[RMDB]
RNA sequence: GGGAACGACUCGAGUAGAGUCGAAAACUCUUCCAUCAGCUUCUGCAGGUGUUCCACCGCCUCGCGGCUGAACCCCACGAAGUCGCGGUCGCCUUCCAGGUACUCGCCGAGCCAGCCGCUGAACGGGGAACACACACUUUUUCGAAAGUGUGUGUUCAAAAGAAACAACAACAACAAC
Reactivity to DMS in 0.01 (KOAc 150mM, MgCl2 10mM, bicine 150mM(pH8.5), 24C), signal-to-noise 2, nucleotides 027 to 126: c070u000c070u010u000c040c020a100u000c050a080g010c020u010u000c040u000g040c070a080g010g010u000g010u000u000c020c060a100c050c020g000c060c040u000c110g040c030g000g000c020u000g010a110a160c060c050c010c070a150c110g010a080a060g000u000c080g020c020g000g000u000c080g020c010c030u000u010c110c130a060g000g000u000a050c080u000c060g000c030c040g020a090g030c080c030a050g010c030c030g010c010u000g010a020a100c080g000g000g000
Reactivity to 2A3 in 0.01 (KOAc 150mM, MgCl2 10mM, bicine 150mM(pH8.5), 24C), signal-to-noise 2, nucleotides 027 to 126: c040u020c000u090u000c060c010a120u050c010a030g030c060u120u030c000u190g030c060a050g010g050u000g040u120u050c040c050a090c060c000g050c050c020u020c040g030c010g020g000c010u030g040a090a090c000c020c020c020a050c070g060a150a010g070u070c010g000c010g090g000u040c030g000c000c030u130u080c050c030a010g000g040u040a090c020u020c110g030c050c020g010a010g030c040c000a010g000c000c020g010c040u030g050a070a040c050g020g030g020